[RMDB]
RNA sequence: GGGAACGACUCGAGUAGAGUCGAAAAGUUCCUGAUCUCCUCUGACUAUGAGCGUGCAGAGUGGAGGGAGAACAUCCGGGAGCAGCAGAAGAAGUGUGAGUAUCCUCUGUCCUGAGAGGGGCUGGGCCGACAAAGGGUAGUUCGCUACCCUUUGUCGAAAAGAAACAACAACAACAAC
Reactivity to 2A3 in 0.01 (KOAc 150mM, MgCl2 10mM, bicine 150mM(pH8.5), 24C), signal-to-noise 1, nucleotides 027 to 126: g020u030u030c020c000u050g090a110u020c010u020c020c000u040c020u020g080a100c020u050a060u240g070a040g130c090g040u150g080c040a000g020a000g070u050g000g050a070g000g030g000a060g030a080a010c020a050u040c050c000g030g020g020a030g030c060a000g030c040a000g010a120a000g060a050a000g110u070g020u030g140a050g040u060a100u100c000c000u040c040u040g020u050c020c020u060g020a050g000a040g040g000g000g000c020u050g000g040g030c040
Reactivity to DMS in 0.01 (KOAc 150mM, MgCl2 10mM, bicine 150mM(pH8.5), 24C), signal-to-noise 3, nucleotides 027 to 126: g020u000u000c010c000u000g000a110u010c010u000c050c020u000c020u000g010a090c060u010a160u010g000a120g030c190g040u000g020c030a030g000a060g010u010g010g000a070g010g010g000a070g000a070a120c090a090u010c040c030g010g010g000a090g020c040a080g020c070a040g020a040a040g000a060a080g020u000g000u020g010a080g010u000a120u010c030c000u000c020u000g000u000c010c020u000g010a120g010a080g000g000g020g020c080u010g000g000g010c180
This 177-nucleotide RNA was probed chemically with 2A3 and DMS.
High 2A3 reactivity points to a flexible backbone, as in loops and unpaired stretches.
Conditions: 150 mM KOAc, 10 mM MgCl2 and 150 mM bicine (pH 8.5), 24 C.